Overview:
An RNA of 177 nucleotides, treated with 2A3 and DMS and read out base by base. The reactions ran in a buffer of 150 mM KOAc, 10 mM MgCl2 and 150 mM bicine (pH 8.5), at 24 C. The DMS profile rests on 1,870 reads. DMS adducts were read by reverse transcription with MarathonRT.
[RMDB]
RNA sequence: GGGAACGACUCGAGUAGAGUCGAAAAUUUGUCAUUUCAGCUACAGUUAUAGGCAUUUUCUUAUAUGUCAUGACAUUACAAAAAACAAGUUUAUUUGGCAUAUUAAAGGCUCAAGGAUUUACGAAUGAGGACUCCAAAAAUUCGUUUUUGGAGUCCUAAAAGAAACAACAACAACAAC
Reactivity to 2A3 in 0.01 (KOAc 150mM, MgCl2 10mM, bicine 150mM(pH8.5), 24C), signal-to-noise 4, nucleotides 027 to 126: u030u020u000g000u000c000a000u010u020u030c050a000g000c010u050a060c030a110g020u040u000a050u050a090g000g000c000a010u070u040u100u000c060u100u070a130u070a000u250g000u000c010a010u040g040a000c000a040u040u220a130c180a080a110a000a070a040a000c140a130a030g030u060u050u030a040u010u010u010g010g000c030a000u030a010u070u150a190a230a030g020g000c010u010c030a030a030g070g010a070u130u050u180a040c070g090a060a060u120g030
Reactivity to DMS in 0.01 (KOAc 150mM, MgCl2 10mM, bicine 150mM(pH8.5), 24C), signal-to-noise 2, nucleotides 027 to 126: u000u010u000g000u010c000a000u000u000u000c070a010g000c110u020a130c200a060g010u000u020a020u010a170g000g000c000a060u000u000u060u030c130u030u000a070u040a000u000g000u000c000a060u050g000a000c030a190u030u040a160c210a000a000a100a050a090a100c130a130a050g000u000u000u000a060u000u010u020g000g000c010a000u030a030u040u040a030a040a240g050g000c000u010c040a050a220g070g020a070u010u040u020a060c070g000a090a040u000g000